[RMDB]
RNA sequence: GGGAACGACUCGAGUAGAGUCGAAAAGAUAUGGACCAAGGUCGAUAAGAAGGGAUCGGAAACGAUCCGCUUCUUUUGACGACCGACGUCCUAAGUCACACCUAUUAGGAGUUCGCUCCUAAUAGAACUCUAAAUCAGUGUUCGCACUGAUUUAGAGAAAAGAAACAACAACAACAAC
Reactivity to DMS in 0.01 (KOAc 150mM, MgCl2 10mM, bicine 150mM(pH8.5), 24C), signal-to-noise 7, nucleotides 027 to 126: g000a030u000a300u010g000g010a020c000c020a100a280g000g010u000c000g010a170u000a020a010g010a020a000g010g000g010a000u000c000g020g010a060a060a140c000g000a000u000c000c000g000c010u000u000c000u000u000u010u020g010a220c070g000a010c010c000g000a290c300g010u000c000c000u000a020a060g010u000c010a190c220a150c150c010u000a000u000u000a000g000g010a020g020u000u010c260g010c000u000c000c000u000a000a000u000a010g000a070a130
Reactivity to 2A3 in 0.01 (KOAc 150mM, MgCl2 10mM, bicine 150mM(pH8.5), 24C), signal-to-noise 3, nucleotides 027 to 126: g010a010u050a010u070g010g000a010c030c030a080a040g030g000u000c010g040a180u050a300a040g010a000a010g000g000g000a000u010c000g000g030a040a030a010c020g000a010u010c010c000g030c000u000u020c000u020u030u050u130g120a030c000g000a000c000c000g000a010c020g000u000c010c000u010a040a000g000u000c010a020c010a040c110c000u010a000u010u010a010g010g000a010g020u060u080c210g110c100u000c000c000u000a000a000u010a010g000a030a030
This 177-nucleotide RNA was probed chemically with DMS and 2A3. The reactions ran in a buffer of 150 mM KOAc, 10 mM MgCl2 and 150 mM bicine (pH 8.5), at 24 C. It was measured as part of the RMDB library TTRDEL.